[RMDB]
RNA sequence: GGGAACGACUCGAGUAGAGUCGAAAAUUCCAGCCGGUCGAGCAUCUGCACCAGCACCGGCGGGAACACCACACUGCCACCGUCUUCGCCGCCGGACUGCUGAAGCGCAUCCGCCAGGCUGCGGCGCGACAGUGUGAGCGUUCGCGCUCACACUGUCAAAAGAAACAACAACAACAAC
Reactivity to 2A3 in 0.01 (KOAc 150mM, MgCl2 10mM, bicine 150mM(pH8.5), 24C), signal-to-noise 2, nucleotides 027 to 126: u070u000c010c000a000g000c000c010g040g010u080c050g070a030g060c020a100u120c130u280g010c020a080c060c030a030g020c070a010c000c000g000g000c020g010g000g000a010a010c010a030c030c010a060c000a030c100u110g030c040c010a080c020c020g060u030c030u110u070c050g090c080c000g030c000c000g020g030a050c060u030g000c030u080g060a090a050g010c040g000c040a040u030c030c000g020c040c010a040g020g000c020u020g000c010g030g080c030g010c040
Reactivity to DMS in 0.01 (KOAc 150mM, MgCl2 10mM, bicine 150mM(pH8.5), 24C), signal-to-noise 2, nucleotides 027 to 126: u000u000c000c010a160g010c020c040g000g000u000c030g010a090g020c030a150u020c180u000g010c050a060c110c070a090g030c150a130c020c030g000g020c020g000g000g000a040a050c090a100c020c020a090c080a030c070u000g040c040c040a050c080c060g020u000c080u000u000c070g040c010c030g000c140c010g010g010a050c140u000g000c040u010g010a080a100g050c130g010c100a100u010c110c020g010c050c030a130g040g020c040u000g030c060g020g010c070g000c240
Annotation:
Chemical mapping of a 177-nucleotide RNA with 2A3 and DMS. Source: RMDB library OK2TST, as collected in RNAgym. As a SHAPE reagent, 2A3 marks flexible, mostly unpaired nucleotides at the ribose 2'-OH. For 2A3 the reverse transcriptase was SuperScript II with manganese. Values cover nucleotides 27 to 126. For 2A3, 2,130 sequencing reads were counted.